Annotation:
This 207-nucleotide RNA was probed chemically with 2A3. For 2A3, 487 sequencing reads were counted. Reactivities are given for positions 27 through 156. The RNA was probed in 150 mM KOAc, 10 mM MgCl2 and 150 mM bicine (pH 8.5) at 24 C. 2A3 adducts were read by reverse transcription with SuperScript II with manganese.
RNA sequence: GGGAACGACUCGAGUAGAGUCGAAAAUUGAUAGGUCGGCGAAGCGGUUGUUGACGUACAGUACCGCCGCCACCAGCAUCGAAGCCAUCGUCAGAAUCGUGGGGAGAUUGACAGACAAGUCUAACUUGAUGCCGCCGGAGUUAUCCCCCGGCCGUUCUGUGUAGAAUGGGUUCGCCCAUUCUACACAAAAAGAAACAACAACAACAAC
Reactivity to 2A3 in 0.01 (KOAc 150mM, MgCl2 10mM, bicine 150mM(pH8.5), 24C), signal-to-noise 1, nucleotides 027 to 156: u030u020g010a020u050a210g040g020u060c150g030g000c020g020a190a010g000c000g010g040u000u000g060u050u140g200a130c090g040u140a070c040a110g050u080a060c000c000g000c000c000g000c000c000a000c000c000a000g000c010a030u080c020g090a020a000g000c000c000a060u010c000g060u020c000a020g110a090a070u030c000g050u060g010g010g040g000a080g000a040u070u110g050a080c040a040g040a010c070a090a000g020u000c030u170a050a060c020u090u020g020a000u000g040c070c110g000c000c000g010g000a040g020u000u060a040u020c000c000c000c020c000g000g020c020c000g060u150u000c020